[RMDB]
RNA sequence: GGGAACGACUCGAGUAGAGUCGAAAACGGGGGCUUUUCCCCGCUGUAAACAGGCGGGGGUAAUAAGCGGGGGGCAAGUCUGGUGUCAGCCGCCGCGGUAAUACCAGCCCCGCGAGUGGUCGGGACGGUUGAGAGAGUACUUCGGUACUCUCUCAACAAAAGAAACAACAACAACAAC
Reactivity to DMS in 0.01 (KOAc 150mM, MgCl2 10mM, bicine 150mM(pH8.5), 24C), signal-to-noise 1, nucleotides 027 to 126: c080g000g040g030g030g010c130u000u000u000u020c000c020c000c030g010c000u000g000u000a080a170a130c300a230g020g010c000g000g010g000g000g000u000a030a030u000a130a220g010c030g000g010g000g000g000g020c110a030a050g000u020c030u000g000g010u020g010u000c090a200g010c000c060g000c060c090g030c030g020g020u000a080a000u040a100c050c050a110g000c080c060c000c030g050c000g000a130g010u010g000g020u040c080g010g000g000a090c120g020
Structure probing data (DMS) for a 177-nucleotide construct.
For DMS, 788 sequencing reads were counted.
Source: RMDB library OK2TST, as collected in RNAgym.
Values cover nucleotides 27 to 126.
The reactions ran in a buffer of 150 mM KOAc, 10 mM MgCl2 and 150 mM bicine (pH 8.5), at 24 C.